[RMDB]
RNA sequence: GGGAACGACUCGAGUAGAGUCGAAAAGUUACGUGGCGCGCACCCGUCUAAUCGGGAGAACCCAAUGGCGGCGGCCGAUAUGACCAAGUGCGCGUUAGCUUGCGAGAUUGGCUGCCCGCAUCCAAUGCGCGUGAAAGGUUUUCGAACCUUUCACGCGAAAAGAAACAACAACAACAAC
Reactivity to DMS in 0.01 (KOAc 150mM, MgCl2 10mM, bicine 150mM(pH8.5), 24C), signal-to-noise 2, nucleotides 027 to 126: g010u050u000a000c100g000u000g000g010c010g000c040g000c070a210c050c030c230g090u000c180u060a030a070u040c050g000g000g000a300g000a010a180c000c000c080a150a070u000g050g000c190g000g000c050g000g050c000c000g000a000u000a050u000g000a300c300c040a050a240g000u000g000c090g000c180g050u070u080a020g000c030u000u000g000c000g020a210g020a030u020u000g010g000c000u000g000c040c000c060g000c010a090u000c120c090a060a070u040g000
Reactivity to 2A3 in 0.01 (KOAc 150mM, MgCl2 10mM, bicine 150mM(pH8.5), 24C), signal-to-noise 2, nucleotides 027 to 126: g100u080u110a060c090g060u080g050g000c000g010c000g040c040a030c000c030c020g000u000c040u160a070a140u170c000g010g020g010a090g080a050a040c020c020c000a040a050u120g170g000c030g000g000c000g040g040c000c010g020a030u050a040u140g010a010c050c080a000a050g000u040g150c140g000c050g100u040u030a090g000c000u000u000g000c040g010a050g010a070u030u060g000g000c010u010g060c080c040c030g060c000a000u050c110c000a100a140u180g030